Conditions: 150 mM KOAc, 10 mM MgCl2 and 150 mM bicine (pH 8.5), 24 C. An RNA of 177 nucleotides, treated with 2A3 and DMS and read out base by base. Source: RMDB library M2PK50, as collected in RNAgym. The DMS profile rests on 2,229 reads. For 2A3 the reverse transcriptase was SuperScript II with manganese.
[RMDB]
RNA sequence: GGGAACGACUCGAGUAGAGUCGAAAAUCAUGCACGUUCGCGUGCAUGAAAAGGCGGCGAGUAUCGCUCAGCGGCGGGCUACAGCGCGCAGCGCAGCUGGAAAAAGAUGAAUCUUCGGAUUCAUCAAGUAUUCCUGAGUGUUCGCACUCAGGAAUACAAAAGAAACAACAACAACAAC
Reactivity to 2A3 in 0.01 (KOAc 150mM, MgCl2 10mM, bicine 150mM(pH8.5), 24C), signal-to-noise 2, nucleotides 027 to 126: u030c000a000u010g020c000a010c000g010u050u070c180g010c010g080u000g000c000a010u000g000a010a000a010a020g060g000c030g000g010c040g030a050g030u100a100u200c030g000c030u050c050a020g000c020g050g000c000g000g000g000c000u110a080c050a060g010c020g030c040g010c040a050g030c050g000c020a040g010c010u080g040g030a070a070a010a010a000g000a010u010g000a000a000u010c010u040u070c180g040g020a010u010u020c010a000u000c000a010a010
Reactivity to DMS in 0.01 (KOAc 150mM, MgCl2 10mM, bicine 150mM(pH8.5), 24C), signal-to-noise 2, nucleotides 027 to 126: u000c010a010u000g010c000a000c010g020u010u040c200g000c020g030u000g020c000a000u000g000a000a060a110a090g000g010c030g010g020c030g000a080g000u000a060u000c090g000c020u000c040a110g010c030g000g000c030g000g000g000c030u010a060c140a090g000c040g010c040g000c060a050g010c030g010c070a070g020c010u020g000g000a050a040a110a110a080g000a010u000g010a020a000u000c000u010u010c170g020g000a000u000u000c000a000u000c000a040a030
DMS adducts were read by reverse transcription with MarathonRT.